An RNA of 177 nucleotides, treated with DMS and read out base by base.
For DMS, 1,453 sequencing reads were counted.
The reactions ran in a buffer of 150 mM KOAc, 10 mM MgCl2 and 150 mM bicine (pH 8.5), at 24 C.
It was measured as part of the RMDB library OK2TRN.

[RMDB]
RNA sequence: GGGAACGACUCGAGUAGAGUCGAAAAACUGUGUCCUUGGGGAUGUUUGUGCCGGAGACGCUGCGCUGGGGCCCAGGGAGCCCCCGUGAGGCCGGAUCUCAGGGCCUCAGCGCAGAGGCAGGCUCCAGCUAGUACUCCAUUUCGAUGGAGUACUAGCAAAAGAAACAACAACAACAAC
Reactivity to DMS in 0.01 (KOAc 150mM, MgCl2 10mM, bicine 150mM(pH8.5), 24C), signal-to-noise 2, nucleotides 027 to 126: a130c120u000g000u010g000u000c010c000u000u000g020g020g000g010a100u010g010u000u000u000g010u010g030c040c000g010g000a080g010a110c120g000c000u000g000c000g000c010u000g010g000g010g000c010c000c030a080g010g000g000a010g010c080c010c140c010c020g000u010g000a200g030g030c200c160g010g030a300u000c010u000c010a060g000g010g010c000c000u000c000a010g000c000g040c020a000g000a040g000g010c080a040g010g000c010u000c000c030a100
DMS (dimethyl sulfate) methylates the pairing face of unpaired adenines and cytosines.